The record gives the reactivity of an RNA of 207 nucleotides to DMS and 2A3. The data come from the RNA Mapping Database (RMDB), library RNAMAK. 2A3 adducts were read by reverse transcription with SuperScript II with manganese. DMS adducts were read by reverse transcription with MarathonRT. Conditions: 150 mM KOAc, 10 mM MgCl2 and 150 mM bicine (pH 8.5), 24 C.
RNA sequence: GGGAACGACUCGAGUAGAGUCGAAAAGCGAGUUUCGACUCGCGACGUGCGUACUACUUAGUCAACAGCAACGGGUGGAGACGAAUCCCAAAUAGGAUUCGUCGAUGAAACCCAGUUGACAUGACUAAGUAUCGCCUCUUGACGUAUUCGUACGUAAGGAUAGAAUAAUGUUCGCAUUAUUCUAUCCAAAAGAAACAACAACAACAAC
Reactivity to DMS in 0.01 (KOAc 150mM, MgCl2 10mM, bicine 150mM(pH8.5), 24C), signal-to-noise 3, nucleotides 027 to 156: g030c000g000a020g000u010u000u030c230g050a130c040u000c010g040c010g010a010c040g040u000g020c010g030u000a140c080u000a010c000u010u000a040g010u000c000a050a240c090a190g010c010a020a000c030g010g010g020u000g020g000a250g010a040c000g020a040a010u000c000c000c000a020a130a200u010a040g000g000a030u000u000c000g000u000c010g010a060u000g010a180a220a140c000c010c000a040g040u010u000g010a060c060a300u000g000a030c010u010a010a030g000u000a020u000c020g010c020c020u030c100u000u000g030a040c010g000u010a240u010u000c080g050u000a030c010g040u000a120a200
Reactivity to 2A3 in 0.01 (KOAc 150mM, MgCl2 10mM, bicine 150mM(pH8.5), 24C), signal-to-noise 7, nucleotides 027 to 156: g000c020g000a010g010u050u180u230c180g170a050c020u000c010g000c000g000a030c050g110u170g000c000g020u060a110c020u010a000c000u040u000a000g000u000c010a050a070c050a270g030c010a000a000c010g010g000g030u010g000g020a020g000a010c000g000a010a010u010c030c020c000a120a290a160u290a060g000g000a000u000u000c000g000u000c000g040a100u010g000a000a000a010c000c000c060a030g000u000u010g060a070c000a040u030g000a000c000u000a000a000g000u000a000u080c010g010c000c030u050c040u090u190g060a030c010g000u010a060u080u140c160g040u060a030c010g040u070a090a130